[RMDB]
RNA sequence: GGGAACGACUCGAGUAGAGUCGAAAACUACAAAAAUGCGUAAUGUUAGCCCGUCCUAAUAUUGGUACGUGUCUAUAAGUUUGGCAUAGUAGAAUAAUAGACGUGUUUAAAUGCCUUCCAAAGUUUAAGAAUUCUAUUAGAGUAUUGCAUUUUGAUAAGCCAUAAUAACGUUCGCGUUAUUAUGGCUAAAAGAAACAACAACAACAAC
Reactivity to 2A3 in 0.01 (KOAc 150mM, MgCl2 10mM, bicine 150mM(pH8.5), 24C), signal-to-noise 2, nucleotides 027 to 156: c020u070a080c040a020a100a010a000a020u070g020c010g000u070a070a110u080g000u110u170a000g020c010c010c000g000u000c050c010u080a190a140u030a110u130u000g070g000u020a000c000g000u000g020u050c040u090a150u070a210a300g110u050u150u120g030g000c000a010u010a070g030u010a010g000a040a000u060a070a000u000a050g020a000c000g010u060g000u040u090u080a040a100a010u070g000c000c000u020u000c000c040a070a110a070g030u030u080u050a060a040g030a070a170u070u050c010u040a060u090u130a040g000a010g010u070a060u070u180g050c030a000u010u080u050u030g080a050u170a190
Reactivity to DMS in 0.01 (KOAc 150mM, MgCl2 10mM, bicine 150mM(pH8.5), 24C), signal-to-noise 2, nucleotides 027 to 156: c010u020a150c120a040a100a100a050a090u010g000c000g050u000a070a020u000g010u010u000a050g040c000c060c250g000u000c040c020u000a040a060u000a040u010u000g000g010u000a010c030g050u000g000u000c030u000a140u000a060a160g040u010u000u000g050g000c040a050u010a080g040u000a040g010a050a050u000a040a190u000a090g020a010c030g050u000g020u000u000u010a020a070a080u010g000c010c000u000u000c030c030a060a080a220g000u000u000u010a060a230g000a090a080u000u000c010u000a040u000u000a130g000a120g020u000a060u000u010g000c030a220u010u000u000u010g020a110u010a110
The record gives the reactivity of an RNA of 207 nucleotides to 2A3 and DMS. 2A3 adducts were read by reverse transcription with SuperScript II with manganese. Values cover nucleotides 27 to 156. For DMS the reverse transcriptase was MarathonRT.